[RMDB]
RNA sequence: GGGAACGACUCGAGUAGAGUCGAAAACUAUGUACAGACAGUACAGUGGAUAAGGUCUGUAGAUAUCCAACUUUAACAAUGGUACUUGCAGUGGUAUCUAUCAAGAUAGGCAGGCUAUCAUAGAAAGAAGAUGUGUAUUUUUCGGAGUACGCAUCUUAAAAGAAACAACAACAACAAC
Reactivity to 2A3 in 0.01 (KOAc 150mM, MgCl2 10mM, bicine 150mM(pH8.5), 24C), signal-to-noise 9, nucleotides 027 to 126: c020u010a010u040g090u000a000c000a010g030a010c010a020g060u060a030c010a060g080u110g130g040a150u040a060a030g050g000u000c000u000g000u000a000g020a040u020a020u020c020c020a040a050c070u060u060u050a090a040c060a090a050u040g020g000u010a010c000u000u030g010c020a050g040u090g140g050u100a000u000c000u010a150u110c070a080a020g000a020u010a010g040g000c000a000g020g000c020u010a000u010c000a010u010a030g120a020a080a000g080
Reactivity to DMS in 0.01 (KOAc 150mM, MgCl2 10mM, bicine 150mM(pH8.5), 24C), signal-to-noise 9, nucleotides 027 to 126: c220u000a020u010g000u010a010c000a020g010a030c030a040g020u010a030c060a290g030u040g010g010a130u010a040a050g010g010u000c010u000g010u000a000g000a020u000a020u020c030c040a090a140c110u010u020u020a070a120c140a080a020u010g000g010u000a040c020u000u000g010c010a140g020u020g020g020u000a010u010c000u000a090u060c240a080a030g000a020u000a030g000g000c010a020g000g000c220u000a000u000c010a020u000a080g000a080a080a070g010